[RMDB]
RNA sequence: GGGAACGACUCGAGUAGAGUCGAAAAGUGACCCAUGUGGGAGCAACAAAGGGAUGGAACAUGGCUGUGUCUUAACAGGUUGGGCUGUAGGGUACACUAAGCUGGCUUGCCCACUCCAAGUUGAGAGUUGGGCCAUGGGAUUUGGGCGAAGGCUCAGCAAUGCUAGUGCGUUCGCGCACUAGCAUUGAAAAGAAACAACAACAACAAC
Reactivity to 2A3 in 0.01 (KOAc 150mM, MgCl2 10mM, bicine 150mM(pH8.5), 24C), signal-to-noise 1, nucleotides 027 to 156: g060u020g080a120c010c000c000a000u100g080u050g000g050g000a030g090c060a060a060c020a050a130a040g080g010g000a090u040g080g010a090a060c040a080u010g000g070c060u050g020u010g020u150c010u030u140a060a000c020a010g000g040u050u030g030g010g030c030u020g060u090a050g010g000g040u040a040c030a030c030u070a100a000g010c020u040g000g060c030u060u120g000c000c000c000a000c030u010c000c000a170a040g080u110u140g080a090g010a000g050u200u070g000g000g000c010c000a030u010g000g000g070a000u080u060u100g020g000g000c070g070a030a020g040g020c010u070c040a050g000